This 207-nucleotide RNA was probed chemically with 2A3.

RNA sequence: GGGAACGACUCGAGUAGAGUCGAAAAGAAAGAAAGAAAUUAGCUCGCCAGUUAGCGAGGUCUGUCCCCACACGACAGAUAAUCGGGUGCAACUCCCGCCCCUUUUUCGAGGGUCAUCGGAACCAAAAAAACUCAGGCAACUUCGGUUGCCUGAGAACAUUCAUCUUGCCUUCGGGCAAGAUGAAUGAAAAGAAACAACAACAACAAC
Reactivity to 2A3 in 0.01 (KOAc 150mM, MgCl2 10mM, bicine 150mM(pH8.5), 24C), signal-to-noise 1, nucleotides 027 to 156: g050a000a120a020g060a060a150a010g120a090a130a030u150u080a110g020c000u010c010g000c020c040a100g190u210u110a010g010c000g000a000g020g000u000c000u000g000u000c020c020c040c010a030c010a020c110g020a000c010a000g040a030u060a080a040u090c030g000g020g000u000g040c030a000a000c030u000c040c000c000g020c020c050c000c000u100u260u000u070u000c040g000a020g020g000g030u070c020a000u000c000g000g000a040a060c060c040a000a050a000a000a090a090a090c000u000c000a000g020g000c010a000a000c040u050u070c230g070g000u000u000g020c010c000u000g000a000g000a000a000
2A3 adducts were read by reverse transcription with SuperScript II with manganese.